[RMDB]
RNA sequence: GGGAACGACUCGAGUAGAGUCGAAAAGGAUUUGGGCUAUAGAAGUUCGUUUUGUAAUGGAAGUAUGGUAUGUGAACUAUGCUUCUCAGGUUUUGAUAUGCUGGACAACUAUGAUGCUAUAAAUGUUGUUCAACACGUUGUAGAUAGGCGUUUGUCCAUAUCGCAGAUGGUUCGCCAUCUGCGAUAUAAAAGAAACAACAACAACAAC
Reactivity to 2A3 in 0.01 (KOAc 150mM, MgCl2 10mM, bicine 150mM(pH8.5), 24C), signal-to-noise 1, nucleotides 027 to 156: g020g010a000u130u130u130g020g020g000c010u050a020u020a130g030a110a070g060u170u130c030g020u120u090u080u040g070u040a050a050u090g010g000a000a010g000u020a000u070g120g010u010a020u040g150u070g000a020a000c090u070a010u060g000c000u050u000c020u030c050a010g080g000u000u010u120u020g040a050u000a000u120g000c030u000g010g000a000c000a020a000c070u000a010u040g090a090u090g080c030u020a010u040a140a080a040u050g010u010u000g010u020u060c060a020a000c020a000c080g030u010u020g060u030a020g060a110u030a000g020g010c050g000u020u000u170g010u020c020c000
About this RNA: Structure probing data (2A3) for a 207-nucleotide construct. 2A3 adducts were read by reverse transcription with SuperScript II with manganese. The reactions ran in a buffer of 150 mM KOAc, 10 mM MgCl2 and 150 mM bicine (pH 8.5), at 24 C. Source: RMDB library OK3TST, as collected in RNAgym.